[RMDB]
RNA sequence: GGGAACGACUCGAGUAGAGUCGAAAAACAAGUGGUGGUAGUCCGCCACUCUAAGGGGACGCCUUUAGAAGAAGAGGCUGGGGGGUAUUCCGGUGUGGGAUACUUAGUAAUAUGCAACGCUAAUUGCUCAAGGAUAGAUGAUUCGUCAUCUAUCCAAGGUAAUGUAGUUGUUCGCAACUACAUUACCAAAAGAAACAACAACAACAAC
Reactivity to 2A3 in 0.01 (KOAc 150mM, MgCl2 10mM, bicine 150mM(pH8.5), 24C), signal-to-noise 2, nucleotides 027 to 156: a000c090a100a010g000u010g000g040u020g020g060u080a040g060u020c000c010g000c000c000a010c020u000c000u010a040a040g000g020g000g050a060c110g090c000c000u040u060u050a080g020a160a000g030a030a000g020a040g010g000c010u030g050g000g010g000g000g000u030a060u080u000c040c060g080g040u140g050u190g090g020g000a000u000a050c000u030u050a010g040u030a060a030u070a090u300g030c010a060a020c020g030c150u050a180a000u110u070g010c060u060c130a100a040g000g000a000u000a000g000a000u010g000a000u040u040c170g040u000c060a010u000c000u000a000u000c000c010a000a000